Chemical mapping of a 177-nucleotide RNA with 2A3 and DMS. The reactions ran in a buffer of 150 mM KOAc, 10 mM MgCl2 and 150 mM bicine (pH 8.5), at 24 C. Source: RMDB library OK2TRN, as collected in RNAgym.
[RMDB]
RNA sequence: GGGAACGACUCGAGUAGAGUCGAAAACAAUGCCACAUCUUAGAAAUGCCUUCUCUUUGGAAUGAAAGUUGACCCAGCAGGCAGGUCACACAGGUGCAGCUGGGCACAGUCAAGCUCUGCCUGAGACAGGGAUCUUUAAGUUCGCUUAAAGAUCCCUAAAAGAAACAACAACAACAAC
Reactivity to 2A3 in 0.01 (KOAc 150mM, MgCl2 10mM, bicine 150mM(pH8.5), 24C), signal-to-noise 1, nucleotides 027 to 126: c030a050a040u100g020c000c000a000c010a070u030c020u090u090a050g090a080a090a040u150g050c020c040u090u000c040u050c010u110u110u120g050g110a190a030u120g070a100a050a010g030u020u040g080a110c040c000c000a030g040c000a030g100g000c010a010g000g080u080c020a000c000a000c000a030g130g030u060g010c020a050g020c090u130g030g060g060c020a040c060a010g050u050c060a070a060g010c030u010c000u050g000c010c000u020g020a030g020a000c110
Reactivity to DMS in 0.01 (KOAc 150mM, MgCl2 10mM, bicine 150mM(pH8.5), 24C), signal-to-noise 2, nucleotides 027 to 126: c050a080a100u000g020c030c020a070c110a020u000c070u000u000a110g000a080a080a100u000g000c030c010u000u000c000u000c040u000u000u000g000g000a140a040u010g010a040a110a060g000u000u000g000a230c010c000c000a120g000c020a160g030g010c040a050g010g000u010c060a110c220a110c070a010g030g010u000g050c140a070g020c050u010g000g050g000c010a020c060a060g030u000c050a090a150g000c070u000c030u000g020c020c020u000g000a070g020a080c200